This 177-nucleotide RNA was probed chemically with 2A3 and DMS. The data come from the RNA Mapping Database (RMDB), library OK1LIB. Conditions: 150 mM KOAc, 10 mM MgCl2 and 150 mM bicine (pH 8.5), 24 C. For 2A3, 2,610 sequencing reads were counted. 2A3 adducts were read by reverse transcription with SuperScript II with manganese.
RNA sequence: GGGAACGACUCGAGUAGAGUCGAAAACUUUCUCGGCGCCGACCAUCAGCUCUGUUAGCUUAGCGGCGACCUGCGGUGACACCGCGCGGCGCUGCUGGUAUCCGACGGUGGUUGAGAUAUUGGCUAGAAAUUCCUUAGCGUUCGCGCUAAGGAAUUUAAAAGAAACAACAACAACAAC
Reactivity to 2A3 in 0.01 (KOAc 150mM, MgCl2 10mM, bicine 150mM(pH8.5), 24C), signal-to-noise 4, nucleotides 027 to 126: c010u040u060u030c010u020c030g030g060c020g000c010c010g010a020c010c000a030u020c020a030g010c120u010c030u070g030u040u080a090g110c010u130u250a000g000c030g040g010c000g120a210c000c000u020g000c010g000g000u130g060a060c070a040c200c010g040c000g010c140g020g000c000g010c000u000g000c000u020g000g040u060a050u020c010c030g000a020c020g000g000u030g000g010u010u020g020a070g030a080u090a110u070u160g040g000c000u010a060g110
Reactivity to DMS in 0.01 (KOAc 150mM, MgCl2 10mM, bicine 150mM(pH8.5), 24C), signal-to-noise 3, nucleotides 027 to 126: c140u000u000u050c020u000c070g000g000c070g020c000c020g000a050c040c060a130u040c050a100g000c150u010c030u050g010u020u000a110g010c030u000u060a020g010c000g000g020c000g000a030c040c000u010g000c030g000g020u020g020a160c140a300c030c000g020c010g000c240g000g020c000g020c000u010g000c000u020g000g000u010a050u010c070c110g000a010c000g010g010u050g010g000u020u000g000a060g010a110u020a150u020u010g000g000c020u000a060g010